[RMDB]
RNA sequence: GGGAACGACUCGAGUAGAGUCGAAAAAUCGCGCCUGGUCGGAACAUAACGACGGCGGGCCGGUGGGGAAUCAGGGGGCUACCGUGGGAUAGCGAUGAGACAGCCGCUCCGAUGGCACCAAGCGUCGCACACUGGCCAUACUUCGGUAUGGCCAGAACCUAUAUAAUCAUUUCGAUGAUUAUAUAGGAAAAGAAACAACAACAACAAC
Reactivity to 2A3 in 0.01 (KOAc 150mM, MgCl2 10mM, bicine 150mM(pH8.5), 24C), signal-to-noise 1, nucleotides 027 to 156: a010u020c000g020c010g000c000c000u200g000g040u030c000g030g070a150a100c030a130u140a110a070c040g060a000c000g030g000c050g000g000g000c050c060g000g000u080g000g000g000g080a010a150u150c040a130g010g040g000g020g030c020u030a060c020c010g040u010g020g040g020a040u060a030g040c000g050a080u040g010a010g030a010c080a000g020c000c000g020c070u090c090c070g120a220u040g000g000c010a030c020c000a100a000g050c010g000u010c020g020c000a040c010a010c030u000g010g000c010c000a010u000a000c030u010u010c040g120g020u000a010u000g010g000c080c000a000g000a000a000

Description
Conditions: 150 mM KOAc, 10 mM MgCl2 and 150 mM bicine (pH 8.5), 24 C. The record gives the reactivity of an RNA of 207 nucleotides to 2A3. The data come from the RNA Mapping Database (RMDB), library M2RFPK.